[RMDB]
RNA sequence: GGGAACGACUCGAGUAGAGUCGAAAAGGCAGGGAACGGAGCAAAGGCAGCAGCUCUAUUUACCAUUGGUCAUUAAGUUCAGCUUAUUGUGGGUCUUGAGUUGUAUUAGACUCUGUAACAUUAUGGACACGGUCUGAAAAUUCGUUUUCAGACCGUGAAAAGAAACAACAACAACAAC
Reactivity to DMS in 0.01 (KOAc 150mM, MgCl2 10mM, bicine 150mM(pH8.5), 24C), signal-to-noise 3, nucleotides 027 to 126: g020g020c030a070g000g020g000a110a080c140g000g010a080g010c070a020a090a090g000g010c040a050g040c050a070g010c090u010c040u000a080u000u010u000a070c040c030a080u010u010g010g010u000c040a020u000u010a040a060g010u010u000c100a090g010c040u000u000a050u010u010g020u000g000g010g010u010c070u000u000g010a070g000u000u010g000u010a150u010u010a060g010a030c010u000c030u000g000u000a070a060c080a070u000u010a080u010g000g010a300
Reactivity to 2A3 in 0.01 (KOAc 150mM, MgCl2 10mM, bicine 150mM(pH8.5), 24C), signal-to-noise 2, nucleotides 027 to 126: g030g030c040a000g120g000g000a110a030c050g040g100a040g000c050a100a010a050g040g040c000a000g000c000a000g000c010u030c010u030a180u030u130u050a050c010c020a040u050u150g080g000u070c030a050u020u070a030a050g000u030u100c100a050g030c050u070u060a090u100u170g030u050g020g030g010u000c000u060u040g060a090g020u100u060g070u070a110u120u050a020g010a010c000u000c040u040g010u040a040a050c010a100u130u210a110u250g010g010a010